Structure probing data (2A3 and DMS) for a 177-nucleotide construct. 2A3 adducts were read by reverse transcription with SuperScript II with manganese. The RNA was probed in 150 mM KOAc, 10 mM MgCl2 and 150 mM bicine (pH 8.5) at 24 C. For DMS the reverse transcriptase was MarathonRT. For 2A3, 10,344 sequencing reads were counted. Reactivities are given for positions 27 through 126. It was measured as part of the RMDB library OK2TST.

RNA sequence: GGGAACGACUCGAGUAGAGUCGAAAACGUCCGAGGUACGUCGUCGUUCUCGGCCCGGCGGUCACCGGGGAUCACGCCGCUCUUCCGGCGAGUCACGGGCCAUGCUAGUUCUUCCCGCGUGGGACGAGAUUCGUAUGCAAUUCGUUGCAUACGAAUCAAAAGAAACAACAACAACAAC
Reactivity to 2A3 in 0.01 (KOAc 150mM, MgCl2 10mM, bicine 150mM(pH8.5), 24C), signal-to-noise 4, nucleotides 027 to 126: c030g020u030c020c040g080a090g070g050u140a040c040g040u060c020g030u020c000g010u080u000c030u000c000g010g000c010c000c000g020g020c100g010g050u050c010a020c040c000g000g000g010g000a010u080c030a020c190g110c070c020g040c060u040c020u300u150c040c000g000g010c030g010a040g090u030c020a010c040g000g000g000c020c010a020u090g020c010u080a070g090u060u030c010u050u020c010c000c000g040c060g090u160g030g010g010a020c030g030a040
Reactivity to DMS in 0.01 (KOAc 150mM, MgCl2 10mM, bicine 150mM(pH8.5), 24C), signal-to-noise 5, nucleotides 027 to 126: c070g000u010c010c030g010a100g000g020u010a050c050g020u000c130g020u000c020g010u000u000c000u000c000g020g000c000c010c010g010g010c130g020g000u000c050a070c010c020g000g000g000g000a030u000c080a120c130g010c100c100g020c300u000c070u000u000c090c000g020g000c010g000a130g000u010c040a100c030g000g010g010c000c020a070u000g010c060u010a090g010u000u000c090u000u000c010c000c020g010c100g000u000g000g000g010a060c070g000a170